[RMDB]
RNA sequence: GGGAACGACUCGAGUAGAGUCGAAAACAAGGUCCUUAUGUAGCUGGAAACGGAUAUAUCUCAUAAGUGGCGUGCAGAGAGAUAAGUAUCUUACUUACUAGAUACGAAUCGGUGCCAGGAAGGACGAUCAAGGGAACGUCUUCGGGCGUUCUCUUGAAAAAGAAACAACAACAACAAC
Reactivity to DMS in 0.01 (KOAc 150mM, MgCl2 10mM, bicine 150mM(pH8.5), 24C), signal-to-noise 9, nucleotides 027 to 126: c100a110a110g010g010u010c010c000u010u010a090u030g010u020a100g010c010u000g010g000a040a070a040c030g000g010a050u010a240u010a050u000c020u000c010a050u040a250a110g010u010g010g010c120g010u030g010c030a080g010a200g000a040g000a020u000a030a100g000u000a010u000c000u000u010a110c280u040u030a110c220u000a010g000a000u000a000c000g000a080a050u010c000g010g010u000g000c000c010a010g000g010a020a020g000g000a020c000g010a120
Reactivity to 2A3 in 0.01 (KOAc 150mM, MgCl2 10mM, bicine 150mM(pH8.5), 24C), signal-to-noise 9, nucleotides 027 to 126: c040a030a050g160g000u010c010c000u050u020a130u220g240u140a090g090c010u010g000g020a100a180a040c020g020g020a020u030a010u010a020u080c010u000c020a060u110a300a040g070u050g300g130c130g100u230g010c030a010g060a000g000a000g000a080u020a100a040g010u000a000u000c000u020u030a080c020u120u050a060c050u060a010g000a000u000a000c000g030a020a010u030c010g060g000u020g030c000c000a000g030g030a020a000g010g000a010c010g020a040